[RMDB]
RNA sequence: GGGAACGACUCGAGUAGAGUCGAAAAACACGAACUGCAUGAAGUAGAAGCACGUGAUCAGGCUGCCGAGCAUCACGGGCACGUGCGCGGGCCGCUCGCCCACCGCGCGCAGCAGAUCGGGCAGCAAAUGGACUGGACGAUUCGUCGUCCAGUCCAUAAAAGAAACAACAACAACAAC
Reactivity to 2A3 in 0.01 (KOAc 150mM, MgCl2 10mM, bicine 150mM(pH8.5), 24C), signal-to-noise 1, nucleotides 027 to 126: a000c060a000c030g020a090a050c010u030g030c010a060u130g090a160a060g100u140a070g080a070a010g000c000a000c040g000u010g000a030u020c020a020g130g060c000u030g000c030c020g020a080g050c070a010u000c000a010c010g000g000g020c040a050c050g020u040g000c020g010c010g010g050g000c030c050g080c120u160c100g070c000c040c010a020c010c000g010c000g030c000g000c010a000g000c000a000g000a040u080c010g000g010g030c000a000g000c000a000a020
Reactivity to DMS in 0.01 (KOAc 150mM, MgCl2 10mM, bicine 150mM(pH8.5), 24C), signal-to-noise 1, nucleotides 027 to 126: a120c070a150c100g000a060a080c030u000g050c020a130u000g040a130a070g020u000a050g000a160a180g000c000a030c020g040u000g000a030u000c050a090g010g020c000u000g000c000c050g000a150g020c150a030u000c020a000c010g010g000g000c000a100c100g010u000g040c040g010c000g010g010g000c020c110g040c200u000c230g000c000c040c020a040c060c030g000c030g020c070g010c050a160g010c040a080g030a070u000c020g020g030g010c010a050g010c010a060a080